Structure probing data (2A3) for a 207-nucleotide construct. The data come from the RNA Mapping Database (RMDB), library M2RFPK. Conditions: 150 mM KOAc, 10 mM MgCl2 and 150 mM bicine (pH 8.5), 24 C. For 2A3 the reverse transcriptase was SuperScript II with manganese.
RNA sequence: GGGAACGACUCGAGUAGAGUCGAAAAUUUAACGCUGUUUUAUUGGCGCAAAGGUUUAUGGAUAAACAACUAAUAAUUAAACCUUUUGUGUGCGAAACGUGGUUGUUUAACGUACUCUUUAAUCGCUUUGGGGAUGUGUCCUUCGGGACACAUCCAACCCAAUAAGACACUUCGGUGUCUUAUUGGGAAAAGAAACAACAACAACAAC
Reactivity to 2A3 in 0.01 (KOAc 150mM, MgCl2 10mM, bicine 150mM(pH8.5), 24C), signal-to-noise 3, nucleotides 027 to 156: u040u050u020a070a020c050g020c060u090g070u060u020u080u090a150u080u160g070g000c000g000c010a020a020a000g020g010u030u000u000a010u050g060g060a140u190a210a230a010c040a060a020c130u190a120a140u110a140a020u130u040a000a000a020c000c000u040u010u050u090g020u000g010u040g070c060g020a030a050a010c050g020u070g010g020u000u040g010u000u020u030a090a030c070g000u030a050c030u000c000u120u100u170a150a170u140c100g080c160u130u120u120g100g060g000g000a000u000g000u000g000u000c010c010u020u030c140g090g000g000a000c000a000c000a000u000c000c000a000a000